[RMDB]
RNA sequence: GGGAACGACUCGAGUAGAGUCGAAAAUGCGUGACUUUACGUUAAAGGGUUAUGUUCUUGCUACCAUUAUUGUGUUUCUGUGUGCUGUACUGAUGUAUUUGUGUUUACCUACAUUUUCUAUGGCACCGAUUGUAUGCCUCUUCGGAGGCAUACAAUCAAAAGAAACAACAACAACAAC
Reactivity to 2A3 in 0.01 (KOAc 150mM, MgCl2 10mM, bicine 150mM(pH8.5), 24C), signal-to-noise 1, nucleotides 027 to 126: u290g030c110g070u110g010a000c010u000u030u030a040c040g080u080u120a140a000a030g020g010g000u080u080a110u230g000u130u000c040u000u020g090c020u040a070c020c120a050u100u130a050u280u260g080u020g030u030u000u000c060u050g080u030g020u010g040c030u030g000u020a020c010u010g010a020u000g010u050a080u020u070u140g080u000g140u120u150u140a000c000c000u000a000c000a020u030u020u040u020c050u010a000u020g000g000c010a010c000c010
Conditions: 150 mM KOAc, 10 mM MgCl2 and 150 mM bicine (pH 8.5), 24 C. Chemical mapping of a 177-nucleotide RNA with 2A3. For 2A3 the reverse transcriptase was SuperScript II with manganese. Values cover nucleotides 27 to 126. It was measured as part of the RMDB library 15KREP.